[RMDB]
RNA sequence: GGGAACGACUCGAGUAGAGUCGAAAAGUAUCUGUAUUUAAGAGCCAGAUUUCGUCUAAUAGAACAAAUAGCUACAGUAAAAAUAACUAGAAUAAUUGCUACACCCACUAGAAACCACGGAUCGUAAUACGGCAAUCGGUUUUCGAUAAUAGGUGGAUCGCAACAUAAUAUUCGUAUUAUGUUGCGAAAAAGAAACAACAACAACAAC
Reactivity to 2A3 in 0.01 (KOAc 150mM, MgCl2 10mM, bicine 150mM(pH8.5), 24C), signal-to-noise 3, nucleotides 027 to 156: g020u020a020u000c000u000g060u050a080u020u190u120a080a020g030a020g060c020c000a010g030a050u030u080u070c010g030u000c030u050a110a140u100a300g060a130a030c050a080a120a080u060a030g020c010u060a070c050a050g040u120a020a060a080a110a030u110a080a100c020u030a010g040a080a020u120a180a040u150u070g010c000u020a030c010a040c030c000c000a010c020u040a030g070a090a050a000c030c000a010c040g040g030a030u020c000g030u020a070a020u090a170c010g030g000c110a090a070u150c040g010g000u020u040u030u080c000g010a010u030a150a030u040a130g000g080u010g040g010a020
Reactivity to DMS in 0.01 (KOAc 150mM, MgCl2 10mM, bicine 150mM(pH8.5), 24C), signal-to-noise 2, nucleotides 027 to 156: g020u000a110u000c040u010g010u000a070u000u010u000a150a140g010a190g020c060c020a090g030a170u010u000u000c000g040u030c090u000a080a130u010a140g020a060a070c090a050a100a130u020a070g020c020u010a020c040a100g000u010a010a110a120a100a060u000a020a080c000u010a070g000a110a140u000a050a090u000u000g020c010u000a080c110a060c020c010c010a080c130u000a220g000a070a050a040c010c010a140c090g000g000a040u000c020g000u000a060a040u000a180c000g010g010c090a060a070u010c040g020g000u000u000u000u000c020g010a060u010a050a120u010a020g010g010u010g010g020a140